[RMDB]
RNA sequence: GGGAACGACUCGAGUAGAGUCGAAAACUCGGUUAAUUCGUUAACCGAGACUUCUUAAACAUCUUUUCAACACAUAGAUGGUAAAUAUUCAAAGAUGUUCCAAUGCGAUAAACUUCGGUUUAUCGAAACAAUAGACGUAAUUCGUUACGUCUAUUGUAAAAGAAACAACAACAACAAC
Reactivity to DMS in 0.01 (KOAc 150mM, MgCl2 10mM, bicine 150mM(pH8.5), 24C), signal-to-noise 9, nucleotides 027 to 126: c000u000c000g010g000u000u000a010a020u000u010c170g020u000u000a000a000c000c000g000a010g000a080c050u000u000c010u000u000a080a090a070c010a000u000c000u000u000u000u010c110a090a090c190a080c200a070u010a060g010a060u000g000g010u010a060a080a110u010a090u000u010c150a060a040a030g010a030u000g000u000u000c080c060a100a090u000g010c010g000a010u000a000a010a010c000u000u010c170g030g000u000u000u000a000u000c000g010a040a080
Reactivity to 2A3 in 0.01 (KOAc 150mM, MgCl2 10mM, bicine 150mM(pH8.5), 24C), signal-to-noise 9, nucleotides 027 to 126: c000u000c000g000g010u020u010a020a010u060u070c130g030u040u010a010a000c000c000g000a000g000a000c010u050u030c000u020u120a090a060a020c000a020u000c010u030u060u100u110c130a130a060c030a030c030a200u160a120g090a130u040g020g020u050a060a130a060u210a080u090u120c050a020a030a020g020a020u030g020u040u000c020c030a080a080u200g050c010g000a000u000a010a010a000c010u030u060c160g070g000u000u010u000a000u000c000g010a020a020